[RMDB]
RNA sequence: GGGAACGACUCGAGUAGAGUCGAAAACGGUAUGUCUGCACGAACGCUUGAAGGCUGCUCGCCUGAGUUCGUGGGUAGCUGCUUGAGGCGGCCAGUGAUGGUUUCGUCCAGAUGGAUGAUCGCCGCUACAGAUUAACGGGUUCGCCCGUUAAUCUGUAAAAGAAACAACAACAACAAC
Reactivity to DMS in 0.01 (KOAc 150mM, MgCl2 10mM, bicine 150mM(pH8.5), 24C), signal-to-noise 2, nucleotides 027 to 126: c040g010g020u010a060u000g000u000c010u010g040c060a030c000g000a020a030c020g000c220u000u040g010a040a020g010g000c010u010g000c110u010c130g000c010c010u030g000a060g010u010u000c020g020u010g000g030g030u000a050g000c010u000g020c040u010u020g010a160g020g020c000g010g020c000c030a010g020u020g000a140u010g010g000u000u020u020c010g020u000c010c010a130g010a130u040g000g010a030u010g040a050u000c090g000c010c030g000c070u000
Reactivity to 2A3 in 0.01 (KOAc 150mM, MgCl2 10mM, bicine 150mM(pH8.5), 24C), signal-to-noise 3, nucleotides 027 to 126: c000g050g000u050a070u140g060u010c050u130g090c040a010c020g000a010a010c000g010c150u120u130g080a010a000g010g000c010u120g080c080u130c130g010c000c040u130g060a080g060u080u030c020g000u000g000g000g000u060a010g000c040u070g000c000u030u070g070a060g110g000c000g000g000c000c080a110g050u040g110a100u070g020g000u030u040u170c010g030u000c020c010a010g060a300u240g130g040a030u100g000a010u060c040g000c050c020g010c020u000